RNA sequence: GGGAACGACUCGAGUAGAGUCGAAAAGAUAUGGAAACACAAGCCUUUUGACGCUCCCAUAUCGGAAACGAUAUCGGGAGCGAUAAGGCUGUGUUUCCUAAGUCAAAGCGCGCCUUCGGGCGCGCAACUGGUAUGAAAGGUUCGCCUUUCAUACCAGAAAAGAAACAACAACAACAAC
Reactivity to 2A3 in 0.01 (KOAc 150mM, MgCl2 10mM, bicine 150mM(pH8.5), 24C), signal-to-noise 2, nucleotides 027 to 126: g000a030u020a010u060g000g000a010a020a000c020a010c080a210a160g000c000c010u100u120u170u300g300a230c120g010c000u000c020c000c010a030u010a000u000c010g000g020a020a060a010c010g030a000u010a010u160c230g010g030g020a000g000c000g000a000u020a020a000g010g000c000u010g000u010g000u000u000u000c000c000u000a000a000g000u010c020a080a080a060g050c040g000c010g020c080c020u120u270c300g180g050g000c030g010c030g000c010a020a000
Reactivity to DMS in 0.01 (KOAc 150mM, MgCl2 10mM, bicine 150mM(pH8.5), 24C), signal-to-noise 1, nucleotides 027 to 126: g010a020u020a230u010g000g000a000a020a000c000a000c040a090a140g000c010c000u000u000u000u000g000a170c170g030c010u000c000c010c000a030u000a010u000c000g000g030a050a040a060c000g010a000u010a000u000c280g010g010g000a000g040c000g010a020u010a000a000g050g000c000u000g000u010g000u000u000u000c000c000u000a010a060g000u000c020a150a220a130g030c030g050c010g110c060c020u010u020c280g010g090g090c000g100c030g010c000a020a020